[RMDB]
RNA sequence: GGGAACGACUCGAGUAGAGUCGAAAAAUACUCAGCGGGUCCGCUGGUGGGCAGCAUGGACAUCGAUGGCAACGACAUCGGCACCAUACAGCACCAUCCCACGCAAAUGGUGGGGCCCGGCGGCUACCAGUACGACCGAUUUCGAUCGGUCGUACUGAAAAGAAACAACAACAACAAC
Reactivity to 2A3 in 0.01 (KOAc 150mM, MgCl2 10mM, bicine 150mM(pH8.5), 24C), signal-to-noise 3, nucleotides 027 to 126: a010u190a050c050u040c030a030g060c060g080g010g010u040c000c030g000c040u040g040g000u070g040g040g000c080a010g000c010a010u050g010g000a080c060a160u120c040g010a000u010g010g020c080a240a190c170g070a060c040a010u000c000g000g000c070a000c020c000a030u070a070c050a040g000c000a060c090c030a050u070c010c000c010a010c010g130c070a070a210a090u270g060g030u020g010g030g020g000c000c010c000g000g000c000g010g000c000u080a130c060
Reactivity to DMS in 0.01 (KOAc 150mM, MgCl2 10mM, bicine 150mM(pH8.5), 24C), signal-to-noise 2, nucleotides 027 to 126: a120u030a170c000u010c090a130g000c100g000g000g010u000c060c020g020c030u000g000g010u000g000g000g000c130a100g010c090a020u000g000g000a090c150a180u000c000g010a000u000g000g000c040a210a210c300g010a060c000a020u020c010g000g010c300a100c000c000a000u000a000c160a020g000c020a010c020c020a140u030c000c000c040a010c090g000c140a110a050a160u070g020g000u030g000g000g000g010c150c000c010g030g000c000g040g000c070u100a070c140